[RMDB]
The record gives the reactivity of an RNA of 207 nucleotides to 2A3. Reactivities are given for positions 27 through 156.
RNA sequence: GGGAACGACUCGAGUAGAGUCGAAAAGAAAGAAAGAAAGAAAGGUAUGAAGUCCUAUUCACGCUAGAUAGGAUAAACUUCAUAUUGAUCGUGUAUGUGCUAACGCACAUACACGAAUGCGCAUGCAGAACUGCAUGCAUGAACAUAUAGUGUGCAACCUGCACUGACGUUUCGACGUCAGUGCAGGAAAAGAAACAACAACAACAAC
Reactivity to 2A3 in 0.01 (KOAc 150mM, MgCl2 10mM, bicine 150mM(pH8.5), 24C), signal-to-noise 1, nucleotides 027 to 156: g010a000a070a000g080a010a070a000g070a000a130a000g130a130a190a000g040g000u020a000u000g000a010a000g060u000c000c000u000a000u110u050c060a010c000g060c020u010a020g030a010u000a000g000g050a010u160a080a030a010c000u000u000c000a000u060a060u060u100g040a080u000c030g000u000g000u020a000u000g000u000g020c070u150a140a000c140g030c000a000c000a000u000a000c000a000c000g020a000a000u070g020c050g000c000a000u000g000c010a000g010a210a070c120u030g000c010a010u000g000c010a010u150g020a030a000c040a010u120a000u020a230g020u010g050u070g040c020a000a110